[RMDB]
RNA sequence: GGGAACGACUCGAGUAGAGUCGAAAACGAUGUAAUGCGCUUUGUACGAAAGAUUUCUCUGCGACAUUAAUUUGGGGCAGAUGGGCAGUUGUGAUUCAAUGUCAAUUGAAUAGCUCAACAAUCAUCUGCCCGGUGAGGGAUUCGUCCCUCACCGGGCAAAAGAAACAACAACAACAAC
Reactivity to 2A3 in 0.01 (KOAc 150mM, MgCl2 10mM, bicine 150mM(pH8.5), 24C), signal-to-noise 3, nucleotides 027 to 126: c030g080a050u180g050u140a010a000u050g010c010g000c000u020u090u140g050u120a040c070g130a060a040a070g180a130u070u160u020c000u010c030u020g010c000g190a190c060a000u010u070a070a140u110u210u270g050g000g030g010c010a000g020a040u030g000g070g000c090a080g020u000u010g000u030g000a010u000u000c010a000a020u080g220u160c110a090a050u020u010g000a010a000u030a050g050c000u030c030a000a020c010a010a000u080c000a000u000c000u020
Reactivity to DMS in 0.01 (KOAc 150mM, MgCl2 10mM, bicine 150mM(pH8.5), 24C), signal-to-noise 2, nucleotides 027 to 126: c020g030a070u010g020u020a070a020u000g010c050g000c020u000u010u000g000u000a000c130g000a090a150a090g000a140u010u000u020c030u020c000u000g000c000g010a190c030a040u000u000a040a070u000u020u010g010g010g000g010c000a000g000a000u000g010g000g000c280a250g000u000u000g010u030g000a070u000u000c000a000a000u000g000u040c300a110a000u000u000g000a000a000u010a180g000c000u000c010a000a020c060a030a200u040c000a000u000c020u000